[RMDB]
RNA sequence: GGGAACGACUCGAGUAGAGUCGAAAAUCACUUUCUUGCCGCGAAUCAUGCUCGCGACAAGGUUAAGCUUCUGCGGGCUGACGCGGAGCGUACGGGCGACGGCUUUCGCCUCGUUAUCCUUAAGCUAACUUUUAAUCAGUUUCGACUGAUUAAAAGUAAAAGAAACAACAACAACAAC
Reactivity to 2A3 in 0.01 (KOAc 150mM, MgCl2 10mM, bicine 150mM(pH8.5), 24C), signal-to-noise 9, nucleotides 027 to 126: u050c010a020c050u060u110u080c020u030u070g040c000c010g010c010g040a080a110u070c040a050u300g030c010u000c010g000c000g030a040c050a030a010g030g010u060u140a070a050g050c010u030u020c090u180g010c000g000g030g000c030u020g010a020c000g010c000g010g000a000g010c010g020u060a040c040g000g010g020c020g010a040c090g040g030c020u130u300u180c120g020c010c000u000c010g010u010u060a150u130c010c000u030u070a040a010g020c010u020a030
Reactivity to DMS in 0.01 (KOAc 150mM, MgCl2 10mM, bicine 150mM(pH8.5), 24C), signal-to-noise 9, nucleotides 027 to 126: u010c090a130c180u000u000u010c030u000u000g010c010c000g010c000g010a130a140u000c090a060u010g010c030u000c000g010c000g010a040c230a040a010g010g010u010u010a110a180g010c020u000u000c090u000g030c010g010g000g000c030u000g010a060c020g020c010g000g010a020g010c040g010u000a060c220g010g000g000c020g010a020c220g020g010c060u000u010u010c150g010c010c010u000c030g010u000u010a080u010c020c010u000u000a070a130g010c030u010a150